[RMDB]
RNA sequence: GGGAACGACUCGAGUAGAGUCGAAAAACAAAAAUAGAUUUAGAUGAUGUCAGUGAUUUAGUAUCUUAAACAAGAUAGCUUGUAAUUUGGAAUCCACCCUUUUAGUUUGUGAGACAUCACUGGAAUGUCAAUAUUCCUCUGACAGUAAAGAGUGGCAUGAUUUAUACGGAUUCGUCCGUAUAAAUCAAAAAGAAACAACAACAACAAC
Reactivity to 2A3 in 0.01 (KOAc 150mM, MgCl2 10mM, bicine 150mM(pH8.5), 24C), signal-to-noise 3, nucleotides 027 to 156: a000c040a000a090a030a040a010u110a060g100a100u070u110u090a030g020a050u080g020a020u040g010u030c010a010g030u070g080a020u020u090u170a030g000u040a060u030c020u020u130a170a160a030c040a000a050g040a040u040a060g090c040u100u080g070u070a100a150u150u140u070g020g020a010a010u030c010c010a040c010c000c000u030u040u010u060a090g030u070u070u140g060u040g020a080g000a020c010a020u030c020a010c100u030g040g030a090a020u030g010u040c010a000a040u060a090u200u060c030c010u000c050u020g050a020c050a050g070u110a030a080a050g050a010g010u060g060g000c020a020
Reactivity to DMS in 0.01 (KOAc 150mM, MgCl2 10mM, bicine 150mM(pH8.5), 24C), signal-to-noise 2, nucleotides 027 to 156: a100c060a050a060a040a090a170u000a080g010a150u000u000u010a110g010a100u010g010a050u010g000u000c060a060g020u000g010a110u000u000u000a070g010u000a050u000c040u000u000a120a050a060c100a040a090g020a140u000a080g040c070u020u000g030u000a050a130u010u000u010g000g000a180a140u000c010c020a060c000c010c020u000u000u000u000a100g010u000u000u010g050u000g020a200g000a050c070a070u000c000a030c030u000g000g010a030a010u000g020u000c220a100a120u000a100u000u000c000c000u000c000u000g020a030c020a090g000u010a040a040a050g000a080g010u000g000g020c070a190
An RNA of 207 nucleotides, treated with 2A3 and DMS and read out base by base. The 2A3 profile rests on 1,265 reads. For DMS the reverse transcriptase was MarathonRT. Source: RMDB library OK3TST, as collected in RNAgym. Conditions: 150 mM KOAc, 10 mM MgCl2 and 150 mM bicine (pH 8.5), 24 C.